[RMDB]
RNA sequence: GGGAACGACUCGAGUAGAGUCGAAAAAUGAGCUGCCUGAGCUACCAAGGAGCUCUGCCACUCCCAGUACUGUUCUACAGUUCUUUAAUUCAACAAAGAAAUUUUUCUUUAGUUCCAAAUAAGUGCCAGGCAUCAGGCUAGGUGCUGGGUGUAUGAACAUGGAGGAUUAGUUCGCUAAUCCUCCAUGAAAAGAAACAACAACAACAAC
Reactivity to 2A3 in 0.01 (KOAc 150mM, MgCl2 10mM, bicine 150mM(pH8.5), 24C), signal-to-noise 2, nucleotides 027 to 156: a010u040g010a010g010c020u210g230c010c000u050g020a060g060c060u100a070c120c000a070a040g000g000a000g000c010u000c010u010g060c020c030a070c030u000c010c010c000a000g000u010a020c040u060g040u050u180c060u090a030c000a060g010u060u060c010u060u230u090a150a120u110u170c020a000a070c020a080a090a000g040a070a080a020u160u170u030u060u000c030u050u070u040a020g020u030u110c080c010a070a030a200u060a300a020g040u060g050c010c010a040g030g040c020a040u070c020a030g060g050c020u130a100g030g000u010g000c000u000g000g050g000u020g020u050a160u050g000a060a000
Reactivity to DMS in 0.01 (KOAc 150mM, MgCl2 10mM, bicine 150mM(pH8.5), 24C), signal-to-noise 1, nucleotides 027 to 156: a040u010g000a060g000c010u000g010c040c020u010g020a140g020c090u010a100c070c060a190a100g000g020a020g000c050u000c000u010g000c050c160a130c040u000c000c010c010a150g030u000a060c020u000g040u000u000c040u000a030c040a070g010u000u000c000u000u000u000a090a190u010u010c050a060a110c070a070a060a070g000a020a030a210u000u000u000u000u000c020u000u000u000a080g000u000u000c020c070a060a110a110u000a050a050g020u000g010c030c000a160g030g010c030a100u000c030a100g010g030c100u000a130g040g020u000g010c000u000g000g050g020u000g030u000a090u000g000a090a240